[RMDB]
RNA sequence: GGGAACGACUCGAGUAGAGUCGAAAAUUAUAACCUAAAGGAUAUAAGGUAUGGCUCAUAUCCACUGCGACAUAGAGACGGCGUCUCUACCUACCACAUGUCGCAGUGGUCCUAUCCGCGAGGAUAGACGCACAACAUCGUUCGCGAUGUUGUGCGUAAAAGAAACAACAACAACAAC
Reactivity to 2A3 in 0.01 (KOAc 150mM, MgCl2 10mM, bicine 150mM(pH8.5), 24C), signal-to-noise 1, nucleotides 027 to 126: u200u000a020u000a170a000c000c010u030a140a070a040g110g000a000u040a050u010a300a080g040g030u010a050u100g090g000c000u000c020a050u040a030u040c000c020a000c020u000g000c000g000a000c000a000u050a030g030a000g000a010c090g090g080c220g010u000c000u000c000u010a080c000c020u120a070c000c040a080c000a120u020g000u010c010g000c000a010g000u000g070g010u000c000c000u000a000u000c000c000g010c050g070a020g000g000a000u020a000g040
Reactivity to DMS in 0.01 (KOAc 150mM, MgCl2 10mM, bicine 150mM(pH8.5), 24C), signal-to-noise 1, nucleotides 027 to 126: u010u000a060u000a040a080c030c010u000a040a090a150g000g000a140u000a020u000a060a000g000g000u030a000u000g000g040c020u020c030a130u060a060u010c000c000a000c000u020g000c010g040a000c000a040u000a000g040a000g000a000c000g050g070c270g000u000c000u000c000u000a040c270c050u000a030c080c020a040c290a050u000g080u050c010g000c000a050g040u000g010g000u000c090c050u000a000u000c020c000g000c160g000a090g000g010a000u030a000g010